[RMDB]
RNA sequence: GGGAACGACUCGAGUAGAGUCGAAAAGCUAAUCUUUCGAGAUUAGCAAAAAGAUAUGGAGCGAACUACCAGCGAUGCAGGACGAAGAACUCGGAAACGAGGGAGUCCUGGGCAGCUGGCGCUCCUAAGUCAAAAAACCCGAGCUUCGGCUCGGGAACAGUAUUCACACUUUCGAGUGUGAAUACUGAAAAGAAACAACAACAACAAC
Reactivity to 2A3 in 0.01 (KOAc 150mM, MgCl2 10mM, bicine 150mM(pH8.5), 24C), signal-to-noise 1, nucleotides 027 to 156: g000c000u000a000a000u020c000u040u130u270c240g100a020g000a040u000u000a000g010c000a000a000a000a270a000g000a010u040a010u030g000g020a000g000c000g010a110a080c040u070a080c230c000a000g000c010g030a030u240g180c010a000g000g000a000c010g100a260a130g030a100a080c010u000c000g000g040a040a060a020c000g000a000g000g010g020a030g010u000c000c000u000g010g030g000c040a020g000c000u000g000g020c000g000c000u000c000c000u000a020a010g020u000c020a000a080a050a050a120a180c020c020c020g000a000g000c080u200u260c300g110g000c000u000c000g000g000g000a000a000